RNA sequence: GGGAACGACUCGAGUAGAGUCGAAAAGAACCGCGAUUCGUCGCGGUUCGAGCGCCGUAGCGCGCAACGGCGUAACGGCAGGAUUAGCGCGCAGCUGCCGACGAUCGGGUGGUUUCGACCACCCGAACGACGAGAAGAAGUUCGCUUCUUCUCGUCGAAAAGAAACAACAACAACAAC
Reactivity to DMS in 0.01 (KOAc 150mM, MgCl2 10mM, bicine 150mM(pH8.5), 24C), signal-to-noise 5, nucleotides 027 to 126: g000a010a010c000c000g010c000g010a020u000u010c160g020u000c000g020c000g010g000u000u000c000g000a110g010c010g010c000c010g030u000a080g020c030g010c010g010c010a060a020c030g010g000c010g010u000a110a120c110g000g010c060a050g000g000a150u010u010a090g000c020g010c010g020c030a200g000c050u000g000c040c030g010a120c190g000a110u000c000g010g000g040u000g010g010u000u000u010c190g000a030c000c000a000c000c000c000g010a000a040
Reactivity to 2A3 in 0.01 (KOAc 150mM, MgCl2 10mM, bicine 150mM(pH8.5), 24C), signal-to-noise 3, nucleotides 027 to 126: g010a000a010c010c010g000c010g020a010u040u080c170g020u010c000g130c000g010g000u000u000c010g000a000g000c000g000c000c010g040u040a050g050c030g000c000g000c070a040a020c010g010g000c020g030u060a130a080c040g060g000c020a020g070g060a140u140u130a060g030c030g000c010g000c040a030g030c020u050g020c020c030g050a110c050g040a110u050c010g000g000g020u010g000g010u040u050u100c110g050a060c010c000a000c010c000c010g000a000a000